[RMDB]
RNA sequence: GGGAACGACUCGAGUAGAGUCGAAAAAUCGUGCUUUCUUACGUUCAGGAACUCAGUGGAUCUGCGGUUCCGUUAGCAAAGCAGAUAGCUGCCGAUCGCAUAUGGAACAGCGUGUAUCCUCCCGUACACCCAGCAGUAUAUUCGUAUACUGCUGGGUAAAAGAAACAACAACAACAAC
Reactivity to DMS in 0.01 (KOAc 150mM, MgCl2 10mM, bicine 150mM(pH8.5), 24C), signal-to-noise 5, nucleotides 027 to 126: a040u010c050g010u010g000c050u010u010u000c010u000u020a100c170g020u010u020c160a090g000g000a020a030c010u020c010a030g040u000g000g010a100u010c030u000g000c150g000g000u010u000c000c000g000u000u000a240g000c080a040a140a100g000c000a030g000a160u030a090g000c040u010g000c020c030g010a210u010c200g000c060a180u020a060u000g000g000a040a080c050a050g000c040g000u010g000u020a040u020c050c040u010c010c010c010g000u030a100c210
Reactivity to 2A3 in 0.01 (KOAc 150mM, MgCl2 10mM, bicine 150mM(pH8.5), 24C), signal-to-noise 9, nucleotides 027 to 126: a000u090c040g030u040g020c050u000u050u060c010u070u100a060c060g110u070u160c080a070g020g030a040a040c020u020c040a080g020u140g100g160a130u060c010u020g020c020g050g000u000u000c030c000g010u000u020a010g000c030a040a020a010g000c000a000g060a130u150a050g100c020u010g000c020c020g080a110u170c060g010c080a060u040a060u210g030g020a060a040c010a020g040c010g020u030g010u030a040u040c010c010u020c000c020c000g020u030a030c010
This 177-nucleotide RNA was probed chemically with DMS and 2A3. For DMS the reverse transcriptase was MarathonRT. For DMS, 12,161 sequencing reads were counted. The reactions ran in a buffer of 150 mM KOAc, 10 mM MgCl2 and 150 mM bicine (pH 8.5), at 24 C. Reactivities are given for positions 27 through 126. Source: RMDB library OK1LIB, as collected in RNAgym.